Conditions: 150 mM KOAc, 10 mM MgCl2 and 150 mM bicine (pH 8.5), 24 C. Structure probing data (DMS and 2A3) for a 177-nucleotide construct. High DMS reactivity at an A or C suggests that its Watson-Crick edge is free.

[RMDB]
RNA sequence: GGGAACGACUCGAGUAGAGUCGAAAACCAGAUUCCUAAAAGAAUGGACAGAAGAAGAAGGGUGAAAAGAAUAAUGAAAAUUAUCCACCUGCGAGUAAAAAAGGGUAUUUACCGCACAGUAAGAAACCAUGAUAGACGUUUUCGAACGUCUAUCAUGAAAAGAAACAACAACAACAAC
Reactivity to DMS in 0.01 (KOAc 150mM, MgCl2 10mM, bicine 150mM(pH8.5), 24C), signal-to-noise 5, nucleotides 027 to 126: c020c020a100g000a110u010u000c020c020u010a070a070a100a110g000a090a060u000g010g000a040c100a100g000a100a060g020a060a050g000a090a040g010g010g010u000g000a110a080a060a100g000a070a050u010a030a010u010g000a090a070a120a050u010u010a040u000c050c020a030c050c070u000g010c020g000a080g010u010a000a010a030a100a090a080g000g010g000u010a050u020u010u010a040c030c020g010c030a060c170a070g000u010a040a060g000a080a060a080c180
Reactivity to 2A3 in 0.01 (KOAc 150mM, MgCl2 10mM, bicine 150mM(pH8.5), 24C), signal-to-noise 5, nucleotides 027 to 126: c010c000a000g040a100u070u060c000c020u090a080a080a030a040g180a060a050u140g030g010a040c060a050g090a070a010g030a060a020g050a070a050g150g000g000u030g040a070a140a000a010g030a030a030u070a050a040u120g090a020a100a050a040u080u020a010u060c010c000a020c000c000u010g010c010g040a090g040u080a000a000a000a020a050a060g140g010g010u150a140u030u030u010a020c000c000g000c020a010c010a030g060u080a110a010g050a090a040a000c040